[RMDB]
Structure probing data (2A3) for a 207-nucleotide construct. The 2A3 profile rests on 561 reads. Source: RMDB library OK3TST, as collected in RNAgym. Values cover nucleotides 27 to 156.
RNA sequence: GGGAACGACUCGAGUAGAGUCGAAAACUCUUAACACAUAUUCACUUAUAACAUCAGUGGAUAAUUUCCUCACCAUUGUACCAGCAUCCAAGCUAAUCCUUGGUUUACCAAUGUAUGCAAGAGGUUACCUUGUCGACUCCUCUAAUAGCGUACUUGGAGUGGAGAUGCUAUUCGUAGCAUCUCCACUAAAAGAAACAACAACAACAAC
Reactivity to 2A3 in 0.01 (KOAc 150mM, MgCl2 10mM, bicine 150mM(pH8.5), 24C), signal-to-noise 1, nucleotides 027 to 156: c000u000c000u040u160a100a020c110a010c010a100u020a010u010u010c020a030c030u090u040a100u120a300a110c080a060u180c040a020g010u000g000g000a010u010a090a100u090u020u090c050c030u100c030a100c010c070a010u000u090g080u080a060c020c050a030g050c010a030u010c040c000a020a000g010c000u100a050a020u050c020c000u050u000g060g000u040u110u110a020c020c010a020a030u270g000u000a030u010g050c020a050a000g000a000g000g000u000u110a100c040c020u160u250g170u140c000g000a050c040u030c010c000u000c000u000a020a190u040a090g000c020g000u000a000c000u000u000g000g010